[RMDB]
Chemical mapping of a 177-nucleotide RNA with DMS and 2A3. The RNA was probed in 150 mM KOAc, 10 mM MgCl2 and 150 mM bicine (pH 8.5) at 24 C. 2A3 adducts were read by reverse transcription with SuperScript II with manganese. The data come from the RNA Mapping Database (RMDB), libraries RFM100 and RFMREP.

RNA sequence: GGGAACGACUCGAGUAGAGUCGAAAAAAGGACAGCAGCAGGCGCGAAACUUGCCCAAUUGGAGAGAGGCAGUUAUGAGACGUAUAUUUUGUAACCGGGGUAGAAUACCGGUGAUUGACUGGAGGGCUUAAGAGUGUAAAUUCGUUUACACUCUUAAAAAAGAAACAACAACAACAAC
Reactivity to DMS in 0.01 (KOAc 150mM, MgCl2 10mM, bicine 150mM(pH8.5), 24C), signal-to-noise 9, nucleotides 027 to 126: a070a050g000g000a070c060a070g010c040a060g020c050a050g010g010c040g000c050g010a070a070a080c070u000u010g020c010c010c040a100a120u020u020g010g010a100g010a100g010a090g010g000c040a030g010u010u010a050u010g010a100g000a060c090g010u010a070u020a070u010u010u010u010g010u010a120a030c020c020g000g000g000g010u010a080g000a110a090u040a060c030c010g000g010u000g010a060u010u010g010a060c060u000g000g010a080g010g000g020c140
Reactivity to 2A3 in 0.01 (KOAc 150mM, MgCl2 10mM, bicine 150mM(pH8.5), 24C), signal-to-noise 9, nucleotides 027 to 126: a000a000g060g010a020c030a040g010c010a000g010c010a020g050g020c020g000c010g080a070a020a020c030u050u110g000c000c000c010a060a120u130u150g050g000a060g010a010g010a030g040g000c020a000g020u040u050a090u150g070a060g010a030c020g040u030a050u010a050u190u180u110u150g060u020a020a010c010c010g010g010g010g010u050a050g110a160a030u070a120c000c000g000g000u000g010a010u030u080g010a010c000u000g010g030a020g020g000g010c000